[RMDB]
RNA sequence: GGGAACGACUCGAGUAGAGUCGAAAAGAUAAGCUAGCAGCAAAAAGGAACCGAUUGCCACCAAGUUCGGAAAGAGAUACCGGGCGAGGCGCUGAAGAAAGAAUCUCGCUUCAGACACCCCAAGGACAUGACCUUAAAAUGUUCGCAUUUUAAGGAAGACGUAUAUUUAGUUCGCUAAAUAUACGUCAAAAGAAACAACAACAACAAC
Reactivity to 2A3 in 0.01 (KOAc 150mM, MgCl2 10mM, bicine 150mM(pH8.5), 24C), signal-to-noise 5, nucleotides 027 to 156: g030a050u120a080a010g010c020u040a010g010c040a000g000c020a050a030a060a080a060g060g010a060a030c060c040g070a110u040u150g000c020c000a030c030c030a070a030g000u030u040c020g000g040a090a090a010g090a020g000a020u060a090c000c030g000g000g020c020g020a050g020g000c050g000c040u050g000a050a040g030a050a180a020g050a100a120u040c080u030c140g030c000u020u030c020a040g030a080c010a100c020c010c000c020a010a050g030g020a030c040a120u100g090a050c000c000u000u000a000a010a000a000u010g020u030u070c120g000c100a000u000u000u000u000a000a000g000g000a010a010
Reactivity to DMS in 0.01 (KOAc 150mM, MgCl2 10mM, bicine 150mM(pH8.5), 24C), signal-to-noise 2, nucleotides 027 to 156: g000a100u000a050a090g020c020u000a060g010c030a110g050c040a020a100a050a100a070g000g000a080a100c030c050g000a130u000u000g000c030c020a100c070c040a040a180g000u000u000c030g000g000a090a050a150g010a120g000a150u000a070c010c000g000g000g040c040g010a130g000g010c050g000c050u000g010a050a050g010a020a070a090g010a100a090u010c050u010c050g000c010u000u000c020a050g000a300c060a050c000c000c010c050a050a160g010g020a090c050a130u000g010a090c000c010u000u010a000a000a010a040u010g000u000u020c220g020c000a020u000u000u000u000a010a030g000g010a060a070